[RMDB]
RNA sequence: GGGAACGACUCGAGUAGAGUCGAAAAAGGGUUUAAAUAAACCUUUCGUGAAGGACAAUGUCAGUUUCGUUGCUGAUGAUUCAGGUACUCCCGUUGUUGAGUAUCUGUCUAAAGAAGACCUACAUACAUACCUUCAACUUCGGUUGAAGGAAAAGAAACAACAACAACAAC
Reactivity to 2A3 in 0.01 (KOAc 150mM, MgCl2 10mM, bicine 150mM(pH8.5), 24C), signal-to-noise 9, nucleotides 027 to 129: a010g100g020g000u080u070u070a200a220a100u300a020a060a010c000c000u010u020u040c110g020u070g070a050a030g020g020a050c050a100a090u110g020u020c010a020g010u010u080u220c190g100u180u150g000c000u000g010a040u020g000a010u010u000c000a000g000g000u000a000c000u000c020c020c020g000u000u000g000u000u000g000a000g000u000a000u000c000u000g010u000c010u100a130a080a030g110a060a020g040a040c010c030u050a060c040a050u170a010c000a010u130a080
Reactivity to DMS in 0.01 (KOAc 150mM, MgCl2 10mM, bicine 150mM(pH8.5), 24C), signal-to-noise 7, nucleotides 027 to 129: a070g080g030g020u050u030u050a120a140a100u120a080a040a070c020c150u040u020u020c070g020u040g030a100a000g070g020a100c020a050a040u000g020u070c020a040g010u010u040u140c270g000u030u020g000c020u030g000a070u010g030a050u010u020c040a040g010g010u020a010c020u010c000c090c010g000u070u000g030u010u010g030a030g030u030a010u020c020u040g000u020c000u000a050a110a060g050a060a020g030a130c040c020u060a070c100a080u080a110c170a040u000a080